[RMDB]
RNA sequence: GGGAACGACUCGAGUAGAGUCGAAAAAUAGUUAAGGUUGCGCUUGCCUAUUUAGGCAUACUUCUCAGGAUGGCGCGUUGCAGUCCAACAAGAUCCAGGGACUGUACAGAAUUUUCCUAUACCUCGAAAAACAUUCGCUUGUUCGCAAGCGAAUGAAGUUCAAGUGGUUGUUCGCAACCACUUGAACAAAAGAAACAACAACAACAAC
Reactivity to 2A3 in 0.01 (KOAc 150mM, MgCl2 10mM, bicine 150mM(pH8.5), 24C), signal-to-noise 1, nucleotides 027 to 156: a010u100a020g090u140u180a100a020g020g010u050u080g000c020g000c040u040u090g000c000c000u050a130u130u250u300a050g040g000c000a020u060a080c040u080u130c200u090c130a000g050g030a130u100g010g020c000g000c010g030u010u100g000c000a000g000u010c040c020a020a020c000a020a300g060a190u030c050c070a010g010g000g000a000c000u000g020u020a000c000a010g140a080a150u050u020u100u000c000c000u010a030u090a070c020c000u020c110g040a000a140a000a000a000c000a000u000u000c000g010c000u000u000g010u070u070c030g060c100a010a010g000c000g030a000a000u000g000a030a010
An RNA of 207 nucleotides, treated with 2A3 and read out base by base.
The reactions ran in a buffer of 150 mM KOAc, 10 mM MgCl2 and 150 mM bicine (pH 8.5), at 24 C.
For 2A3 the reverse transcriptase was SuperScript II with manganese.